[RMDB]
RNA sequence: GGGAACGACUCGAGUAGAGUCGAAAAGAAAGAAAGAAGAAUCACCAGGAGGCAAGGAUCCUCAACUACGUUAUUCGGGCACCUUGAGUUGAGAGGAGCUAGUGGUGCGCCCGGCCUGUAGAUCAAAACACGACAGGCGGGUUCGCCCGCCUGUCAACAAGGUGUAUUGCUUCGGCAAUACACCUUGAAAAGAAACAACAACAACAAC
Reactivity to 2A3 in 0.01 (KOAc 150mM, MgCl2 10mM, bicine 150mM(pH8.5), 24C), signal-to-noise 1, nucleotides 027 to 156: g110a000a060a010g040a030a030a000g130a020a000g030a010a080u080c030a040c020c030a030g040g050a100g020g000c000a020a240g020g000a010u030c000c000u000c000a050a040c020u210a140c030g020u110u110a100u140u120c000g000g000g010c010a060c070c080u060u180g030a010g010u050u030g000a040g010a000g040g000a000g000c000u010a000g060u010g070g000u010g000c000g010c020c020c050g000g000c000c000u060g010u040a030g000a120u220c040a030a050a070a030c070a010c080g000a000c030a000g000g000c010g000g000g010u030u020c150g110c000c010c050g000c000c000u000g010u000c000a000a000